[RMDB]
RNA sequence: GGGAACGACUCGAGUAGAGUCGAAAACGCAAAGUCAAAGUGAGUCCACGAAUGGCGAAUAAGCCAACAUAAGGUGACUAAGCAAAUAGACUCAGUAAUAGCCUUAAUGCGCCCAUGUCAAAGGAGCAGUAACAUAGAAAUUCGUUUCUAUGUUACUAAAAGAAACAACAACAACAAC
Reactivity to 2A3 in 0.01 (KOAc 150mM, MgCl2 10mM, bicine 150mM(pH8.5), 24C), signal-to-noise 9, nucleotides 027 to 126: c030g000c010a060a040a000g030u060c030a030a010a030g050u030g020a010g010u010c030c020a050c080g140a130a130u070g040g000c020g040a070a110u180a170a000g000c010c010a040a030c030a140u210a100a080g060g000u040g030a040c050u060a050a040g020c010a010a040a050u090a040g010a020c000u000c020a000g030u100a030a090u040a080g030c010c010u080u090a140a060u060g010c020g050c010c010c020a070u130g130u090c110a130a050a050g090g010a070g030c020
Reactivity to DMS in 0.01 (KOAc 150mM, MgCl2 10mM, bicine 150mM(pH8.5), 24C), signal-to-noise 9, nucleotides 027 to 126: c050g010c020a030a070a060g010u010c060a090a160a120g010u010g010a050g010u010c010c040a050c170g010a110a050u010g000g000c000g010a120a090u040a130a200g010c010c010a050a100c200a100u050a110a060g010g020u010g010a160c130u010a070a190g010c030a040a070a050u000a110g000a030c000u010c010a020g000u030a030a030u010a180g000c170c030u010u020a070a090u010g020c010g000c010c000c010a110u030g000u020c130a040a090a090g010g000a080g010c110